[RMDB]
The data come from the RNA Mapping Database (RMDB), library RFM100. Structure probing data (DMS and 2A3) for a 177-nucleotide construct.
RNA sequence: GGGAACGACUCGAGUAGAGUCGAAAAAGGAAGAGGGGGGACACUGCUGUGCUGGGCCACCGGUGUGGGUGCAGGCGGGAAGGAAUGUGCCUAGCGGGUGUGGCGAGGAGUGUAGCCAGCUGUGGGUACAACCAGUUAACUUCGGUUAACUGGUUGUAAAAGAAACAACAACAACAAC
Reactivity to DMS in 0.01 (KOAc 150mM, MgCl2 10mM, bicine 150mM(pH8.5), 24C), signal-to-noise 2, nucleotides 027 to 126: a080g000g020a100a060g010a100g010g000g000g000g000g010a140c040a050c030u000g010c010u010g010u030g020c000u000g020g020g010c050c000a040c040c020g000g030u030g000u000g000g010g030u000g030c030a060g010g020c070g010g010g010a130a080g000g000a110a050u010g010u010g010c020c000u000a280g000c010g000g010g020u030g000u040g000g000c020g020a070g030g010a070g010u010g010u030a080g010c000c010a050g000c000u010g020u010g010g010g020u010
Reactivity to 2A3 in 0.01 (KOAc 150mM, MgCl2 10mM, bicine 150mM(pH8.5), 24C), signal-to-noise 5, nucleotides 027 to 126: a010g110g020a060a010g020a110g000g050g000g000g000g000a000c020a010c050u060g000c010u030g050u120g060c000u060g020g130g000c000c010a020c010c020g080g000u080g030u160g030g030g000u050g020c000a010g050g050c080g070g050g040a040a010g040g040a120a030u060g010u030g030c020c000u010a040g020c020g000g050g000u200g010u040g040g020c040g010a070g080g030a070g040u150g050u120a010g020c010c000a020g000c000u020g000u020g020g030g000u030

Reactivities are given for positions 27 through 126. The RNA was probed in 150 mM KOAc, 10 mM MgCl2 and 150 mM bicine (pH 8.5) at 24 C.